[RMDB]
RNA sequence: GGGAACGACUCGAGUAGAGUCGAAAAGCUUUUUUCUGUUCAGAUCUCGAAAACAUUCAGCGGCUCAGUGAUUGUCGAACAAUAGAUGAAGCGCAAAAAAUUCUGGCUCAAGCCUAAAGUUACGUCUAAUGGUCCAGUUAUUCGUAACUGGACCAUUAAAAGAAACAACAACAACAAC
Reactivity to DMS in 0.01 (KOAc 150mM, MgCl2 10mM, bicine 150mM(pH8.5), 24C), signal-to-noise 1, nucleotides 027 to 126: g000c060u000u000u040u000u000u030c030u060g000u010u020c040a100g000a090u000c090u000c020g010a060a110a010a060c210a040u000u000c090a090g000c020g000g000c040u000c060a080g000u000g000a020u000u000g030u000c070g040a020a000c030a060a010u040a030g000a100u000g000a110a120g000c030g000c100a000a020a070a120a000a070u060u000c030u000g000g000c050u020c060a080a030g040c080c000u020a050a060a060g030u000u000a010c010g010u000c060u000
Reactivity to 2A3 in 0.01 (KOAc 150mM, MgCl2 10mM, bicine 150mM(pH8.5), 24C), signal-to-noise 2, nucleotides 027 to 126: g000c000u090u000u000u000u010u010c010u020g000u020u030c030a030g010a140u040c030u010c000g120a100a060a020a010c060a070u180u130c060a000g060c010g070g020c020u040c100a040g020u030g110a090u040u080g060u110c020g000a010a030c000a000a080u050a080g050a050u050g010a010a000g000c020g040c130a000a000a000a000a010a110u120u050c030u020g010g010c000u000c100a070a040g020c020c010u130a180a120a040g010u050u060a070c050g030u020c050u030
Chemical mapping of a 177-nucleotide RNA with DMS and 2A3. For 2A3, 819 sequencing reads were counted. Reactivities are given for positions 27 through 126. For DMS, 1,621 sequencing reads were counted. The RNA was probed in 150 mM KOAc, 10 mM MgCl2 and 150 mM bicine (pH 8.5) at 24 C.